Conditions: 150 mM KOAc, 10 mM MgCl2 and 150 mM bicine (pH 8.5), 24 C. The record gives the reactivity of an RNA of 177 nucleotides to DMS and 2A3. As a SHAPE reagent, 2A3 marks flexible, mostly unpaired nucleotides at the ribose 2'-OH. For DMS the reverse transcriptase was MarathonRT. 2A3 adducts were read by reverse transcription with SuperScript II with manganese. For DMS, 6,551 sequencing reads were counted. Values are in units of 0.01, from 0 to 300, in steps of 10.
RNA sequence: GGGAACGACUCGAGUAGAGUCGAAAACUAGCGUCCGCUUAUACGCGCGCUCACGGAUGCAGAUGCUCGAACAACAGCGCGCGGGCGUGCAGUCGCAGCGCCAAUACACGCGGGCGUCGUGACUGGAGGAUACGGCUUGAUUCGUCGAGCUGUAUCCAAAAGAAACAACAACAACAAC
Reactivity to DMS in 0.01 (KOAc 150mM, MgCl2 10mM, bicine 150mM(pH8.5), 24C), signal-to-noise 4, nucleotides 027 to 126: c020u010a110g000c010g000u000c020c000g020c040u000u000a090u010a270c050g020c020g020c000g000c010u000c120a080c210g000g000a050u000g010c010a100g010a100u000g000c000u000c040g010a070a100c090a090a300c190a030g010c010g010c020g010c010g010g000g000c010g000u000g000c020a090g020u000c070g000c040a090g010c010g000c000c010a090a100u000a070c130a110c220g000c020g000g000g000c000g000u000c030g020u000g000a160c010u000g000g000a300
Reactivity to 2A3 in 0.01 (KOAc 150mM, MgCl2 10mM, bicine 150mM(pH8.5), 24C), signal-to-noise 5, nucleotides 027 to 126: c010u020a020g020c000g010u010c010c000g050c050u210u230a110u040a110c020g010c000g000c000g020c000u010c020a040c040g080g030a140u110g000c000a020g030a170u150g020c010u020c040g060a080a010c020a020a010c000a020g000c000g000c000g000c000g010g000g000c000g000u030g000c020a030g090u080c050g000c020a040g020c000g000c000c000a020a020u050a030c040a000c040g010c000g020g000g000c000g010u010c020g010u010g020a020c010u010g010g010a040